[RMDB]
RNA sequence: GGGAACGACUCGAGUAGAGUCGAAAAAAGUGAGGGAAGCAGCAUGAGCACGUUCAUCGGUCAUCUCGGCCUGGCGCUUAUCAUCGGUGCCUUUUUCUUCUGCACCGACUUCGCCCUGUCGGCCGCGCGGCUGUCCGGCAACUUCAGCCGGCGAGAAGUAAGCCUAAAUAUUCGUAUUUAGGCUUACAAAAGAAACAACAACAACAAC
Reactivity to DMS in 0.01 (KOAc 150mM, MgCl2 10mM, bicine 150mM(pH8.5), 24C), signal-to-noise 3, nucleotides 027 to 156: a050a070g010u000g010a080g030g010g010a090a080g000c030a080g000c010a090u020g000a100g040c040a090c070g010u000u010c040a110u010c040g030g020u000c040a100u000c070u000c060g030g030c020c040u020g020g010c040g000c120u010u000a100u000c120a070u000c020g010g020u000g020c000c130u000u000u000u000u000c090u020u000c070u010g030c010a020c000c000g010a020c040u000u000c060g010c000c030c060u000g000u000c050g010g050c010c030g020c110g020c060g010g010c030u000g020u000c020c030g000g000c040a060a090c090u000u010c080a110g000c010c010g020g010c030g010a090g000a100a250
Reactivity to 2A3 in 0.01 (KOAc 150mM, MgCl2 10mM, bicine 150mM(pH8.5), 24C), signal-to-noise 5, nucleotides 027 to 156: a000a020g120u090g010a060g010g020g020a040a040g040c050a000g010c020a060u090g050a020g030c050a020c090g060u090u070c050a090u120c050g030g030u050c020a090u050c070u050c060g020g010c010c020u030g020g000c030g000c070u090u090a080u130c070a010u010c020g020g010u010g030c020c010u070u170u120u080u040c090u130u030c040u080g000c000a000c010c000g010a010c010u070u070c010g010c000c000c010u070g080u100c020g020g010c000c020g010c010g000c010g030g000c000u010g030u040c000c020g030g010c050a140a050c020u140u070c020a030g000c000c000g010g010c020g010a060g010a120a010